[RMDB]
RNA sequence: GGGAACGACUCGAGUAGAGUCGAAAAACCUUCCAGACCAUCAGCCCUCUGUGCUGGAAGAGGAAUCUCCAAGGCCAGAGAGAGCCCCUGGCUCAGCAAGUUAGUAGCCAGGCCUGAGUCCCAGAGAACCUGGAGUCCCAAGUGAAGGUUCGUAUAAUCACUCCGAUUUAUUCGUAAAUCGGAGUGAAAAAGAAACAACAACAACAAC
Reactivity to DMS in 0.01 (KOAc 150mM, MgCl2 10mM, bicine 150mM(pH8.5), 24C), signal-to-noise 1, nucleotides 027 to 156: a040c020c000u000u010c000c020a050g030a040c060c040a050u020c020a080g010c100c040c020u000c000u000g070u010g000c030u000g000g020a110a100g000a110g030g000a150a140u000c000u000c040c010a110a280g010g010c000c000a050g000a170g010a060g010a200g060c090c100c060c020u000g010g000c020u000c060a160g000c090a110a190g030u010u000a080g000u000a050g010c010c060a040g000g020c030c060u040g000a130g060u000c030c020c050a200g000a170g000a060a040c040c010u000g010g000a250g020u000c000c000c010a070a280g010u020g030a060a090g050g030u000u000c000g030u000a060u000a150a260
Record summary: Source: RMDB library OK3TST, as collected in RNAgym. Chemical mapping of a 207-nucleotide RNA with DMS. The reactions ran in a buffer of 150 mM KOAc, 10 mM MgCl2 and 150 mM bicine (pH 8.5), at 24 C. For DMS, 1,272 sequencing reads were counted. DMS adducts were read by reverse transcription with MarathonRT.